[RMDB]
An RNA of 177 nucleotides, treated with 2A3 and read out base by base.
The RNA was probed in 150 mM KOAc, 10 mM MgCl2 and 150 mM bicine (pH 8.5) at 24 C.
It was measured as part of the RMDB library OK1LIB.

RNA sequence: GGGAACGACUCGAGUAGAGUCGAAAAGUUGGGUCAUUCUACUUCUCUAUGGGCUCUUCAGUACAUUCGAUCAGUGGACGCGUGUGCUAGUGCCAUUCGUGCAGUGGCAAUUGCAGCCUAGGCCCAAGGCCGUGCUACGAUUCGUCGUAGCACGGCCAAAAGAAACAACAACAACAAC
Reactivity to 2A3 in 0.01 (KOAc 150mM, MgCl2 10mM, bicine 150mM(pH8.5), 24C), signal-to-noise 2, nucleotides 027 to 126: g080u040u000g000g000g000u050c070a070u200u010c120u100a050c010u020u000c000u000c020u050a150u140g020g010g000c010u000c000u080u160c070a000g050u020a010c000a000u000u040c050g180a300u000c130a080g240u200g300g000a010c000g030c010g000u000g000u000g000c000u020a000g090u000g070c020c000a000u020u070c180g160u170g100c050a030g020u000g020g000c000a030a060u160u030g070c040a000g010c000c020u040a020g000g000c010c000c040a000a020